[RMDB]
RNA sequence: GGGAACGACUCGAGUAGAGUCGAAAACAUCGUUACUACGGUAACGAUGAACAAGAGCGUACGCGCUCUUGAACUCAGCAGCGUGAGCUGCUGAGACUGGUACGGUGACGUACCAGAGUACCAACUUCGGUUGGUACAAGCAGAUCGUGAGAUCUGCAGGCUUGCUACGGCAAGCCAGGAGGAGACUUCGGUCUCCUCCACCUGUUGGCUACGGCCAACAGGAAGGGAAAUGGACUGAGCGGCGCCGACCGCCAAACAACCGGCAUAGGCUAUUCUUCGGAAUAGCCAAAAGAAACAACAACAACAAC
Reactivity to 2A3 in 0.01 (KOAc 150mM, MgCl2 10mM, bicine 150mM(pH8.5), 24C), signal-to-noise 6, nucleotides 027 to 266: c000a000u000c000g000u010u000a010c010u020a020c210g080g000u000a000a000c000g000a000u010g010a030a020c000a000a000g000a000g000c000g030u050a030c240g020c010g010c140u000c000u000u000g000a040a020c000u010c000a000g000c010a000g000c010g060u100g100a030g010c000u000g010c000u000g000a000g000a010c010u000g000g000u000a000c010g010g020u040g070a010c000g000u000a000c000c000a000g000a010g000u000a000c000c000a000a000c010u050u060c240g120g000u000u000g000g000u000a010c010a000a020g000c000a000g000a000u000c000g040u040g090a090g000a020u000c000u000g000c010a000g000g000c000u010u000g000c010u020a070c210g130g000c000a000a000g000c000c010a000g000g000a000g000g010a000g000a010c020u090u090c290g110g000u000c000u000c000c000u000c000c010a000c000c000u000g000u000u000g000g000c010u020a070c270g150g000c010c000a000a000c000a000g010g040a020a060g060g020g050a040a080a140u230g080g040a060c140u120g040a090g090c020g010g000c000g040c030c020g180a300c030c030g000c010c030a060a080a030c020a010a010c030c000g030g050c030a040u170a060
Reactivity to DMS in 0.01 (KOAc 150mM, MgCl2 10mM, bicine 150mM(pH8.5), 24C), signal-to-noise 2, nucleotides 027 to 266: c000a020u000c010g000u010u000a010c010u000a130c140g010g000u000a010a000c000g000a000u000g000a170a250c000a000a010g000a020g020c000g000u010a070c170g020c040g010c000u000c000u000u000g000a170a270c000u000c000a000g000c030a020g030c000g000u010g010a180g020c000u000g000c020u000g020a000g000a050c010u000g000g010u000a010c000g010g000u020g000a080c010g010u000a000c000c000a000g000a240g000u000a000c000c000a010a010c000u000u030c160g000g000u020u000g000g020u000a010c000a080a090g000c020a000g020a030u010c000g000u020g000a180g000a010u000c000u000g020c010a020g000g010c000u010u000g000c000u000a130c180g030g000c000a000a000g010c000c020a000g000g010a010g010g000a030g010a000c000u000u020c220g010g010u010c000u000c000c000u000c000c010a020c000c000u010g000u000u000g000g000c000u000a100c180g030g010c000c000a000a000c000a000g010g000a090a100g000g000g010a080a080a080u020g000g000a110c120u010g010a130g030c030g000g020c080g010c020c000g030a140c020c020g000c000c100a040a060a130c090a030a030c100c030g000g020c040a210u030a130

Background
An RNA of 307 nucleotides, treated with 2A3 and DMS and read out base by base. For DMS the reverse transcriptase was MarathonRT. High DMS reactivity at an A or C suggests that its Watson-Crick edge is free. It was measured as part of the RMDB library POS240. As a SHAPE reagent, 2A3 marks flexible, mostly unpaired nucleotides at the ribose 2'-OH. The DMS profile rests on 6,394 reads. The reactions ran in a buffer of 150 mM KOAc, 10 mM MgCl2 and 150 mM bicine (pH 8.5), at 24 C.